[RMDB]
RNA sequence: GGGAACGACUCGAGUAGAGUCGAAAAGCGUAGAUUCGUCUACGCCGGUCGAUAUGGAUCGUGAGUAGCGCACAGGGUCAAUGUUCGGAAACGAACAUAAGUCCCUGUGAACUACGCUACCACGAUCCUAAGUCUAAGAGUGGGUUUCGACCCACAAUUGAAAACGUAAAUUCGUUUACGUUUUCAAAAAAGAAACAACAACAACAAC
Reactivity to 2A3 in 0.01 (KOAc 150mM, MgCl2 10mM, bicine 150mM(pH8.5), 24C), signal-to-noise 6, nucleotides 027 to 156: g010c000g000u010a000g010a030u060u090c210g080u000c170u000a000c000g000c000c010g070g110u160c060g020a050u020a050u180g010g000a000u000c000g000u010g040a180g000u010a000g000c020g000c000a000c000a010g000g020g000u030c050a130a040u010g000u000u000c000g000g040a050a090a090c010g010a000a000c000a000u020a080a050g030u020c000c000c000u010g000u010g000a000a000c020u110a050c010g000c000u000a000c000c000a010c000g000a000u000c000c000u000a000a000g000u020c030u070a160a000g080a060g110u010g000g040g040u080u230u220c290g100a130c000c000c000a030c030a040a030
Reactivity to DMS in 0.01 (KOAc 150mM, MgCl2 10mM, bicine 150mM(pH8.5), 24C), signal-to-noise 4, nucleotides 027 to 156: g000c000g020u000a000g000a080u000u010c300g040u000c000u000a000c000g020c010c010g020g000u010c060g020a160u000a260u000g000g000a010u010c000g050u000g010a190g030u000a000g010c010g000c000a040c020a030g020g010g000u000c030a300a040u000g000u000u000c000g000g010a180a140a300c000g010a030a010c000a020u010a030a070g010u000c000c000c010u000g010u000g000a040a150c040u010a090c000g000c020u000a020c010c000a020c010g010a000u000c010c000u000a010a050g000u000c040u000a110a120g020a160g000u000g010g010g000u010u000u000c090g020a070c010c010c000a000c020a000a080